An RNA of 177 nucleotides, treated with 2A3 and DMS and read out base by base. For 2A3, 462 sequencing reads were counted. Values cover nucleotides 27 to 126. The reactions ran in a buffer of 150 mM KOAc, 10 mM MgCl2 and 150 mM bicine (pH 8.5), at 24 C.
[RMDB]
RNA sequence: GGGAACGACUCGAGUAGAGUCGAAAAUCGAGGCAGACGAUAUCGUCUGCUGUACCGAGUGUGGCGAACCGUUUGCGAGCGCUGCAGUCCUCGAGAACGUUCGCAGCGAACUCGAGGGAAGCGGAGAUAUAGGGGAUGCGUUCGCGCAUCCCCUAUAAAAAGAAACAACAACAACAAC
Reactivity to 2A3 in 0.01 (KOAc 150mM, MgCl2 10mM, bicine 150mM(pH8.5), 24C), signal-to-noise 1, nucleotides 027 to 126: u040c000g010a040g040g020c000a070g010a010c080g170a300u110a150u270c000g030u000c000u000g000c000u000g000u000a000c000c000g040a190g000u010g000u090g020g080c010g060a120a090c040c040g000u030u000u240g120c170g000a000g010c050g090c120u050g090c100a000g000u100c000c000u000c000g000a010g000a040a000c000g050u060u000c040g030c220a070g000c000g000a010a000c000u000c000g000a000g010g000g000a070a040g000c060g000g000a060g020a030
Reactivity to DMS in 0.01 (KOAc 150mM, MgCl2 10mM, bicine 150mM(pH8.5), 24C), signal-to-noise 2, nucleotides 027 to 126: u000c030g000a260g010g010c000a010g010a010c000g070a240u000a110u030c010g090u000c010u000g000c000u000g000u040a010c090c050g000a100g000u010g010u030g000g020c080g000a080a090c100c000g000u020u030u000g000c000g010a040g000c180g020c050u040g030c010a080g000u010c050c000u020c000g000a070g000a010a290c000g000u000u010c300g040c180a280g000c000g000a010a160c000u000c000g000a030g000g020g000a170a040g010c070g020g000a180g080a170